[RMDB]
RNA sequence: GGGAACGACUCGAGUAGAGUCGAAAAAUUUGUUGGAGAUAAAACCUACGAUUGUGGGGUAAGAAGGUUUUAUGUUAAAGUAGAUAAAGGAAAAGUUACAUUAUUCCAUAGUAAUAAUGGUGGAACAGUAGUUAGAUGGUUUCGACCAUCUAACUACAAAAGAAACAACAACAACAAC
Reactivity to DMS in 0.01 (KOAc 150mM, MgCl2 10mM, bicine 150mM(pH8.5), 24C), signal-to-noise 2, nucleotides 027 to 126: a080u000u000u000g010u010u000g010g010a140g000a020u000a010a010a020a010c010c000u000a060c040g000a150u010u020g010u000g010g010g000g000u010a170a140g010a130a030g000g010u000u000u000u000a010u000g020u000u000a110a060a050g000u000a050g000a060u000a060a050a090g010g020a060a060a070a140g000u000u000a060c040a060u000u000a060u000u000c030c110a100u010a140g000u020a080a020u000a030a020u000g010g020u000g000g020a020a070c150a100
Reactivity to 2A3 in 0.01 (KOAc 150mM, MgCl2 10mM, bicine 150mM(pH8.5), 24C), signal-to-noise 1, nucleotides 027 to 126: a000u090u130u070g010u020u040g110g000a100g000a060u030a020a020a020a010c000c000u030a000c040g010a010u170u200g000u150g050g000g000g030u010a000a030g030a000a000g070g000u080u000u000u000a020u010g070u060u120a060a010a000g030u080a030g040a080u080a160a090a030g060g000a040a150a090a000g010u030u030a010c010a060u040u030a000u120u000c000c000a080u000a020g050u080a030a060u040a100a000u000g070g010u030g060g060a020a000c030a050